Record summary:
The record gives the reactivity of an RNA of 177 nucleotides to DMS and 2A3. Conditions: 150 mM KOAc, 10 mM MgCl2 and 150 mM bicine (pH 8.5), 24 C. Source: RMDB library RFMREP, as collected in RNAgym. 2A3 is a SHAPE reagent: it acylates the 2'-hydroxyl of flexible nucleotides of all four kinds. Values cover nucleotides 27 to 126. For DMS, 1,981 sequencing reads were counted. The 2A3 profile rests on 1,714 reads. For DMS the reverse transcriptase was MarathonRT.
RNA sequence: GGGAACGACUCGAGUAGAGUCGAAAAACCAUGGACCCGGUGAAAUUCCACUAGUCGUGAAGAUGCGACUUACCCGCGGAAGGACGGAAAGACCCCGUGAACCUUCACUGCAGCUUGGCAUUGGCCGCUAAUAUUUUCUCUUCGGAGAAAAUAUUAGAAAAGAAACAACAACAACAAC
Reactivity to DMS in 0.01 (KOAc 150mM, MgCl2 10mM, bicine 150mM(pH8.5), 24C), signal-to-noise 3, nucleotides 027 to 126: a080c020c010a110u000g020g000a130c040c070c030g010g000u000g000a080a030a160u010u010c030c030a070c130u000a070g020u010c040g020u010g020a160a070g020a130u010g010c020g000a030c030u010u000a110c080c050c080g020c090g000g010a050a040g010g020a140c010g010g000a090a090a150g020a180c120c070c020c020g020u010g000a060a100c060c010u010u000c000a070c100u010g000c080a040g010c100u000u000g040g000c030a120u010u000g010g020c020c040g010
Reactivity to 2A3 in 0.01 (KOAc 150mM, MgCl2 10mM, bicine 150mM(pH8.5), 24C), signal-to-noise 2, nucleotides 027 to 126: a000c010c000a020u020g000g030a020c010c040c060g020g000u040g030a130a100a120u120u010c020c000a040c090u000a030g020u020c030g030u020g100a120a100g130a140u220g020c000g000a000c000u010u050a040c000c040c010g000c000g030g040a050a030g020g000a050c010g000g010a120a090a020g110a040c030c000c000c000g010u030g070a030a060c030c000u030u000c050a040c060u050g010c000a010g010c030u070u100g010g000c040a110u050u120g080g020c020c000g010